[RMDB]
RNA sequence: GGGAACGACUCGAGUAGAGUCGAAAAGGUGGUAAUCAGGUCGGUGAUGCCCUGCACGCCGUUGAGCAGCACCUCGUCGGCGCUACGGAAAGCAUCCAUCAGCGAUACCGCGGCAUCUCCCAUCUGCGACGAAGAAUCUAUUCGUAGAUUCUUCGUCAAAAGAAACAACAACAACAAC
Reactivity to 2A3 in 0.01 (KOAc 150mM, MgCl2 10mM, bicine 150mM(pH8.5), 24C), signal-to-noise 6, nucleotides 027 to 126: g080g010u030g010g070u090a180a170u070c040a040g070g150u210c060g040g020u060g030a050u020g010c010c000c040u020g000c020a010c020g000c000c000g020u020u080g010a010g000c120a020g030c020a100c050c000u000c010g040u020c000g010g000c010g000c050u030a010c010g010g020a140a100a030g010c010a010u020c070c000a040u040c050a000g080c010g020a020u020a030c010c010g000c020g030g010c020a070u020c020u030c080c010c010a070u030c020u060g010c030
Reactivity to DMS in 0.01 (KOAc 150mM, MgCl2 10mM, bicine 150mM(pH8.5), 24C), signal-to-noise 7, nucleotides 027 to 126: g000g010u000g000g010u000a060a180u000c020a040g010g020u010c080g020g020u000g010a060u010g000c080c050c020u000g010c150a140c030g010c010c010g020u000u000g010a030g010c140a100g010c180a110c210c010u000c060g010u010c020g010g000c020g010c050u000a130c090g010g010a080a090a180g010c020a050u000c050c070a050u010c030a100g000c070g010a080u010a030c020c030g000c020g010g010c110a080u010c150u000c010c000c020a130u000c040u010g020c300